Chemical mapping of a 177-nucleotide RNA with 2A3 and DMS. The data come from the RNA Mapping Database (RMDB), library M2PK50. For 2A3, 4,275 sequencing reads were counted. The RNA was probed in 150 mM KOAc, 10 mM MgCl2 and 150 mM bicine (pH 8.5) at 24 C. 2A3 adducts were read by reverse transcription with SuperScript II with manganese.
RNA sequence: GGGAACGACUCGAGUAGAGUCGAAAAUCAUCGUUCUUCGGAACGAUGAAGUAUAACGCGGGCUCCGGACACAGGCGUAGCUGGCCUGGGAUAGUCUCAGUAUGGGGCAAACUUUCGAGUUUGCCAACGACUUGUAAUCUUUCGAGAUUACAAGUCGAAAAGAAACAACAACAACAAC
Reactivity to 2A3 in 0.01 (KOAc 150mM, MgCl2 10mM, bicine 150mM(pH8.5), 24C), signal-to-noise 2, nucleotides 027 to 126: u020c010a000u000c000g000u010u000c000u040u020c220g090g000a000a000c000g020a000u000g000a000a000g000u040a110u010a180a040c060g000c050g030g020g000c020u010c060c010g060g010a020c050a000c000a110g040g000c020g050u040a040g050c090u090g080g010c010c020u000g000g020g000a100u080a070g060u000c020u020c070a050g050u120a100u240g090g000g000g130c010a010a000a000c020u060u060u070c170g010a020g010u010u010u020g000c000c000a030a050
Reactivity to DMS in 0.01 (KOAc 150mM, MgCl2 10mM, bicine 150mM(pH8.5), 24C), signal-to-noise 5, nucleotides 027 to 126: u000c000a000u000c000g020u000u000c000u000u030c190g020g010a010a010c000g020a010u000g000a010a060g010u010a070u010a080a090c100g010c070g000g000g000c030u000c020c030g010g010a100c070a110c060a030g010g010c060g010u000a080g010c090u010g010g000c010c020u000g000g010g010a100u000a070g000u000c020u000c050a110g010u010a100u010g010g000g000g010c000a010a000a010c010u000u010u010c170g000a030g000u000u000u000g010c010c010a030a110